Overview
An RNA of 170 nucleotides, treated with 2A3 and DMS and read out base by base. 2A3 adducts were read by reverse transcription with SuperScript II with manganese. The reactions ran in a buffer of 150 mM KOAc, 10 mM MgCl2 and 150 mM bicine (pH 8.5), at 24 C. The data come from the RNA Mapping Database (RMDB), library 15KLIB. Reactivities are rounded to 0.1 and cut off at 0 and 3. For DMS, 59,426 sequencing reads were counted.
RNA sequence: GGGAACGACUCGAGUAGAGUCGAAAAUACUUACAGUAUAUAGAAAAACUGUAUAAAGACCUUACAGGACACAUGCUUGACAGUUAUUCUGUCAUGCUAUGUGGUGAUAAUUCUGCUAAGUUUUGGGACACGAAAGAGUUCGCUCUUUCGAAAAGAAACAACAACAACAAC
Reactivity to 2A3 in 0.01 (KOAc 150mM, MgCl2 10mM, bicine 150mM(pH8.5), 24C), signal-to-noise 9, nucleotides 027 to 129: u100a000c020u010u000a000c000a000g020u020a060u030a020u090a190g250a050a120a020a020a010c000u000g030u020a010u060a070a100a020g100a060c010c000u010u020a010c010a010g000g050a020c000a000c000a010u010g000c000u020u010g000a000c000a010g040u120u080a190u300u170c000u000g000u000c000a000u000g000c020u090a020u010g010u000g010g040u010g040a050u080a140a060u070u010c010u010g050c070u010a020a030g020u020u020u090u100g110g020g020a020c040a010
Reactivity to DMS in 0.01 (KOAc 150mM, MgCl2 10mM, bicine 150mM(pH8.5), 24C), signal-to-noise 9, nucleotides 027 to 129: u050a050c070u000u000a050c020a030g020u030a050u050a300u050a110g020a100a040a090a080a070c020u020g010u000a000u020a060a070a060g000a140c120c040u010u020a030c000a010g010g000a090c020a020c000a030u000g000c020u000u000g000a030c000a000g020u020u050a140u070u050c000u030g030u020c000a000u010g030c030u050a020u010g010u000g010g020u030g030a140u030a080a070u060u020c020u010g000c170u010a010a040g020u010u010u010u040g000g000g040a140c180a140